[RMDB]
Structure probing data (DMS and 2A3) for a 207-nucleotide construct.
RNA sequence: GGGAACGACUCGAGUAGAGUCGAAAAAGACAUACAUAGAUACUUACCAAAGCAGUUUAACUUUCUGUUAGACAGCGCAGAAGGUAAACUUAUUUUAGAAAACAAUCACGUUAUUUAUGCUGUAUUGUAUAAGGAUAACUUCGCCACCGCACUAGGAAAUAGUAGUUCUGUUCGCAGAACUACUAUUAAAAGAAACAACAACAACAAC
Reactivity to DMS in 0.01 (KOAc 150mM, MgCl2 10mM, bicine 150mM(pH8.5), 24C), signal-to-noise 3, nucleotides 027 to 156: a110g000a100c040a080u000a070c070a080u010a100g000a110u000a070c070u000u010a160c030c020a060a100a120g050c100a040g010u010u000u000a020a040c020u000u000u010c050u010g020u010u010a100g020a120c110a090g030c210g030c020a060g000a080a080g020g020u000a030a020a040c020u000u000a070u010u000u000u000a130g000a100a080a090a100c060a120a090u000c050a090c080g030u000u000a060u000u010u000a040u000g000c040u010g020u000a050u010u010g030u000a060u010a050a080g010g010a120u000a040a050c030u010u000c010g020c030c010a120c040c020g020c060a060c060u000a080g030g010a110
Reactivity to 2A3 in 0.01 (KOAc 150mM, MgCl2 10mM, bicine 150mM(pH8.5), 24C), signal-to-noise 5, nucleotides 027 to 156: a010g070a020c020a030u160a020c010a020u160a060g050a030u090a130c020u090u070a080c060c030a060a070a020g130c050a030g010u020u020u010a120a060c000u030u060u000c000u010g020u020u020a120g030a120c050a020g030c020g000c040a010g010a020a000g000g000u010a010a010a000c000u030u070a110u160u170u050u080a060g070a030a080a040a020c030a020a040u100c030a030c110g020u030u050a090u080u140u030a080u130g000c010u020g050u090a090u100u090g030u020a040u050a160a040g050g010a020u030a110a030c030u070u060c040g000c020c010a040c000c030g030c020a030c080u060a030g000g010a060
Record summary
The 2A3 profile rests on 3,386 reads. Conditions: 150 mM KOAc, 10 mM MgCl2 and 150 mM bicine (pH 8.5), 24 C. Source: RMDB library OK3TST, as collected in RNAgym. The DMS profile rests on 5,583 reads.